[RMDB]
RNA sequence: GGGAACGACUCGAGUAGAGUCGAAAAACAAGUGGUGGUAGUCCGCCACUCUAAGGGGACGCCUUUAGAAGAAGAGGCUUGGGGGUAUUCCGGUGUGGGAUACUUAGUAAUAUGCAACGCUAAUUGCUCAAGGAUAGAUGAUUCGUCAUCUAUCCAAAGUAAGAUGACUCUUCGGAGUCAUCUUACUAAAAGAAACAACAACAACAAC
Reactivity to 2A3 in 0.01 (KOAc 150mM, MgCl2 10mM, bicine 150mM(pH8.5), 24C), signal-to-noise 1, nucleotides 027 to 156: a020c110a150a050g000u000g000g000u000g030g040u060a020g050u020c010c010g040c000c000a020c000u000c000u010a070a090g000g000g050g030a050c150g070c020c010u070u040u050a130g050a060a030g030a070a040g010a050g000g070c030u060u080g080g000g000g010g010u010a010u120u000c120c010g270g000u220g040u110g110g010g000a030u030a050c000u050u030a020g020u030a000a090u050a060u210g030c020a030a090c040g000c070u090a070a120u030u040g040c030u000c080a170a070g000g000a000u000a000g000a000u000g000a000u010u050c170g070u010c040a000u020c000u020a020u040c000c000a000a000
Structure probing data (2A3) for a 207-nucleotide construct. For 2A3, 472 sequencing reads were counted. The data come from the RNA Mapping Database (RMDB), library M2RFPK. Values cover nucleotides 27 to 156.